[RMDB]
RNA sequence: GGGAACGACUCGAGUAGAGUCGAAAACGCACGCGUGAGCGUGCGGCUCUGCAUGAGCAGAGCAAGGGGAAGCAACGCGUCACACCCCCGCUCGAUCGAGAUGUAGAUCGAGCGAAAACGCCUGUAGCUAGAUGAUGCUACAGUGCGAAGACGCGAAGCGUCUGAGCUCGUUCGCGAGCUCAGACGCAAAAGAAACAACAACAACAAC
Reactivity to DMS in 0.01 (KOAc 150mM, MgCl2 10mM, bicine 150mM(pH8.5), 24C), signal-to-noise 2, nucleotides 027 to 156: c010g010c010a020c000g050c010g020u020g030a300g060c000g040u000g030c000g000g010c000u000c000u000g010c030a190u000g000a300g020c000a000g010a060g020c040a050a020g000g000g010g020a050a300g000c000a040a080c010g010c000g010u000c010a130c040a300c000c000c000c030c070g000c000u020c010g000a000u000c000g000a230g030a230u000g020u000a160g010a010u000c030g000a040g000c000g000a000a050a070a130c000g000c000c000u000g010u000a010g020c010u000a200g000a280u010g010a120u010g000c000u010a000c000a000g010u010g050c000g020a090a040g010a040c010g070c010g000a040a190
Reactivity to 2A3 in 0.01 (KOAc 150mM, MgCl2 10mM, bicine 150mM(pH8.5), 24C), signal-to-noise 4, nucleotides 027 to 156: c000g000c000a000c000g030c000g020u080g070a060g020c000g000u000g000c000g000g000c000u000c000u000g010c040a160u300g140a090g080c000a000g000a010g000c010a050a060g000g000g000g010a100a030g030c080a110a110c030g000c000g000u010c010a040c010a020c020c000c000c010c010g000c000u000c010g000a000u000c020g010a030g060a290u170g080u140a010g000a000u000c000g000a000g000c000g000a010a000a000a010c020g000c000c000u010g010u010a000g000c010u020a100g020a300u220g010a050u180g100c000u000a000c000a000g000u030g000c000g020a090a050g000a000c000g000c000g000a020a010

An RNA of 207 nucleotides, treated with DMS and 2A3 and read out base by base.
For DMS, 3,062 sequencing reads were counted.
Source: RMDB library OK3TST, as collected in RNAgym.
For 2A3, 2,914 sequencing reads were counted.
2A3 adducts were read by reverse transcription with SuperScript II with manganese.
Reactivities are given for positions 27 through 156.
For DMS the reverse transcriptase was MarathonRT.
As a SHAPE reagent, 2A3 marks flexible, mostly unpaired nucleotides at the ribose 2'-OH.
Conditions: 150 mM KOAc, 10 mM MgCl2 and 150 mM bicine (pH 8.5), 24 C.